The record gives the reactivity of an RNA of 207 nucleotides to DMS and 2A3. It was measured as part of the RMDB library OK3TST. For 2A3 the reverse transcriptase was SuperScript II with manganese.
RNA sequence: GGGAACGACUCGAGUAGAGUCGAAAAUGCAAAGCUCUCCGUCUCUAUGAGAACACUGGCGUUGAGGGAGCACUUAUAGGACAGAGAAGGACAGCACUUUUAGGUGCUGUGGAGCUGUAGUGGGGCAUUGAAACCAAGCUGGGACCACCUGGAAGGACAUCACUGGUACGUUCGCGUACCAGUGAUGAAAAGAAACAACAACAACAAC
Reactivity to DMS in 0.01 (KOAc 150mM, MgCl2 10mM, bicine 150mM(pH8.5), 24C), signal-to-noise 1, nucleotides 027 to 156: u000g000c120a050a080a070g000c020u020c010u000c030c010g030u000c000u000c010u000a050u010g000a100g000a100a110c080a080c070u000g020g010c030g010u010u010g000a080g010g050g000a170g020c070a070c050u000u010a080u020a060g000g000a120c070a040g000a090g010a040a100g010g000a060c000a060g010c020a010c010u010u010u010u010a160g010g010u010g000c000u000g030u000g030g000a050g090c040u000g010u000a060g010u000g000g040g070g020c030a120u000u000g000a120a110a110c050c020a060a080g020c060u000g010g010g000a070c000c000a090c070c040u010g020g010a070a040g010g020a280
Reactivity to 2A3 in 0.01 (KOAc 150mM, MgCl2 10mM, bicine 150mM(pH8.5), 24C), signal-to-noise 3, nucleotides 027 to 156: u170g000c040a060a010a020g010c000u020c000u000c010c020g060u010c030u000c000u080a080u140g030a030g050a100a010c050a010c080u090g080g010c050g080u100u130g030a070g010g020g030a000g050c000a010c000u060u110a080u060a080g020g020a020c030a010g010a010g010a090a030g060g000a020c010a000g010c000a010c020u060u080u170u300a130g110g000u020g000c000u000g010u010g000g040a020g000c050u040g000u050a020g050u030g030g040g000g050c040a060u040u130g040a030a020a000c030c010a050a000g030c050u080g000g000g080a050c040c000a030c030c030u000g030g040a050a020g060g010a020
For DMS, 2,935 sequencing reads were counted. Reactivities are given for positions 27 through 156.